[RMDB]
RNA sequence: GGGAACGACUCGAGUAGAGUCGAAAAGUAGAGGCCGAUUCGAUAGCCAAGCCGACAGAUUGAACUGGUAUCGAUUUGGUGCUGUUUCAAGAAUGUGAGAAAACGAUCUCCAAUCUCGUUGGCAGGGCUAAAUUACCCGCUUCGGCGGGUAAUUUAGAAAAGAAACAACAACAACAAC
Reactivity to DMS in 0.01 (KOAc 150mM, MgCl2 10mM, bicine 150mM(pH8.5), 24C), signal-to-noise 4, nucleotides 027 to 126: g020u020a080g000a170g040g020c010c010g010a170u030u010c060g020a110u010a030g020c000c000a020a070g020c010c000g020a010c000a030g000a100u010u000g000a050a080c090u000g020g000u000a020u000c000g000a170u050u040u030g000g030u000g010c020u000g000u000u000u020c040a070a090g010a070a130u030g020u020g000a030g000a040a060a110a110c230g000a080u010c010u010c000c010a070a120u010c000u000c160g020u000u000g000g020c010a120g010g010g010
Reactivity to 2A3 in 0.01 (KOAc 150mM, MgCl2 10mM, bicine 150mM(pH8.5), 24C), signal-to-noise 5, nucleotides 027 to 126: g130u110a030g020a070g050g060c010c010g010a060u060u040c010g040a040u100a050g030c010c010a060a030g010c010c020g020a030c030a030g090a070u060u090g030a060a020c030u080g030g030u020a010u010c060g130a270u080u070u260g000g010u060g020c000u010g060u010u040u070c040a060a030g060a110a110u170g090u180g060a020g040a010a130a050a030c140g080a110u000c010u000c030c010a010a080u020c020u050c130g010u040u050g000g000c050a040g030g050g000